[RMDB]
RNA sequence: GGGAACGACUCGAGUAGAGUCGAAAAUGGCUUCUCCUGGGCGAUCGCUCGCUGUUUUUGUGGCUGGCUUUCAGCGGGCUGGAGGAGCCGGGAGCGGAGGCGGAGGACCGAGCCAAAAACUUCAGCCUAUAGAGGAAGCUGUUCGCAGCUUCCUCAACAAUGCACACCAUUUCGAUGGUGUGCAUUGAAAAGAAACAACAACAACAAC
Reactivity to 2A3 in 0.01 (KOAc 150mM, MgCl2 10mM, bicine 150mM(pH8.5), 24C), signal-to-noise 1, nucleotides 027 to 156: u100g010g010c000u030u010c000u000c000c020u070g010g030g020c070g100a120u100c050g000c020u000c000g010c010u030g060u040u000u010u130u010g090u010g030g000c010u000g020g080c020u000u010u020c000a000g010c040g000g000g030c000u000g010g000a000g000g000a000g010c000c000g000g030g010a070g060c040g020g060a030g010g030c070g020g040a040g030g020a010c010c010g040a010g030c050c010a020a060a010a050a080c080u140u090c010a000g000c010c000u080a100u140a170g020a010g010g000a000a000g000c000u020g010u060u110c210g000c090a000g000c000u000u000c000c000u000c000a000a000